[RMDB]
RNA sequence: GGGAACGACUCGAGUAGAGUCGAAAAGAUAUGGAUCGCAAGAACUUUUGACGUGCAUCGGAAACGAUGUGAACGAUAAGUUCUGCGAUCCUAAGUCAAAACAGCCAAGAGUUCGCUCUUGGCUGAAUCACUUAGUCUAGUUCGCUAGACUAAGUGAAAAAGAAACAACAACAACAAC
Reactivity to DMS in 0.01 (KOAc 150mM, MgCl2 10mM, bicine 150mM(pH8.5), 24C), signal-to-noise 7, nucleotides 027 to 126: g000a040u000a300u010g000g010a000u000c000g000c000a040a090g020a000a010c000u000u000u000u000g000a140c050g020u010g010c000a000u000c000g020g010a120a090a170c020g000a010u000g020u000g010a090a020c000g000a210u000a010a020g000u000u000c000u000g000c010g000a000u000c000c000u000a010a060g010u000c020a100a070a120a230c000a010g000c000c000a000a000g000a020g020u000u020c250g010c000u000c000u000u000g000g010c000u000g000a020a060
Reactivity to 2A3 in 0.01 (KOAc 150mM, MgCl2 10mM, bicine 150mM(pH8.5), 24C), signal-to-noise 7, nucleotides 027 to 126: g030a000u040a040u120g010g000a000u010c010g010c120a210a250g010a030a010c020u110u150u210u300g300a110c020g020u030g000c000a000u010c000g010g020a080a030a020c010g000a000u010g010u030g040a060a010c000g030a040u040a180a010g010u000u000c000u000g010c010g000a000u000c000c000u000a000a000g010u000c010a010a010a090a170c010a000g000c000c000a000a000g010a010g030u130u200c300g050c160u000c000u010u010g000g000c000u000g000a000a010
An RNA of 177 nucleotides, treated with DMS and 2A3 and read out base by base. The reactions ran in a buffer of 150 mM KOAc, 10 mM MgCl2 and 150 mM bicine (pH 8.5), at 24 C. For DMS the reverse transcriptase was MarathonRT.